RNA sequence: GGGAACGACUCGAGUAGAGUCGAAAAGAUAUGGACAUACAAAUGAGACCCGUGGUUGUCAGCUCUGAGGUCGGAAACGACCUCCAGAGCUUGGAUUUACCACGGGUCUCUAUGUAUGUCCUAAGUCCAUACCUCUUUACUUCGGUAAAGAGGUAUGAAAAGAAACAACAACAACAAC
Reactivity to DMS in 0.01 (KOAc 150mM, MgCl2 10mM, bicine 150mM(pH8.5), 24C), signal-to-noise 3, nucleotides 027 to 126: g010a110u000a300u010g000g020a010c020a000u000a000c000a020a190a230u010g000a040g010a010c000c000c010g050u000g010g000u000u000g000u010c000a070g000c000u000c000u000g020a030g000g010u000c010g010g000a100a130a260c020g000a020c000c010u000c140c110a000g000a010g000c000u000u000g020g010a030u000u020u000a030c010c000a010c010g000g000g000u010c000u000c000u000a050u000g000u000a010u000g000u000c010c000u000a000a090g000u010c050